[RMDB]
The record gives the reactivity of an RNA of 177 nucleotides to 2A3 and DMS. The RNA was probed in 150 mM KOAc, 10 mM MgCl2 and 150 mM bicine (pH 8.5) at 24 C.
RNA sequence: GGGAACGACUCGAGUAGAGUCGAAAACAUAAUCUCCUCAUCGAAACGCGAAACCCGGAGAACAAGACGAUGAACGCCACCUACCAAGCCCUGAAAACUCUGCGCGACUCCUGCGAAGCUGCCAAGGAACACCAUCCAAUUUCGAUUGGAUGGUGUUAAAAGAAACAACAACAACAAC
Reactivity to 2A3 in 0.01 (KOAc 150mM, MgCl2 10mM, bicine 150mM(pH8.5), 24C), signal-to-noise 2, nucleotides 027 to 126: c040a060u230a160a190u050c000u030c020c030u000c000a040u010c060g090a170a040a070c100g060c020g070a100a010a000c040c020c020g030g040a030g000a040a040c040a060a030g040a020c030g060a070u120g050a050a010c010g030c020c000a000c000c030u040a050c030c020a080a020g020c020c040c020u000g040a020a000a070a000c040u060c050u030g020c010g000c010g050a040c030u010c030c000u000g030c020g010a060a020g020c030u030g010c020c000a010a050g090g010
Reactivity to DMS in 0.01 (KOAc 150mM, MgCl2 10mM, bicine 150mM(pH8.5), 24C), signal-to-noise 3, nucleotides 027 to 126: c150a090u020a060a110u010c020u010c000c020u000c040a030u000c080g000a040a080a070c150g020c050g000a050a110a110c070c020c030g020g000a090g050a070a100c080a060a050g000a100c060g010a060u010g000a080a080c150g000c080c000a080c040c000u020a090c050c030a050a080g000c020c000c060u000g030a070a090a120a070c050u000c020u000g010c080g020c080g030a050c050u010c020c010u010g030c030g000a060a100g020c060u000g000c050c050a030a110g000g000

It was measured as part of the RMDB library OK2TST.
High DMS reactivity at an A or C suggests that its Watson-Crick edge is free.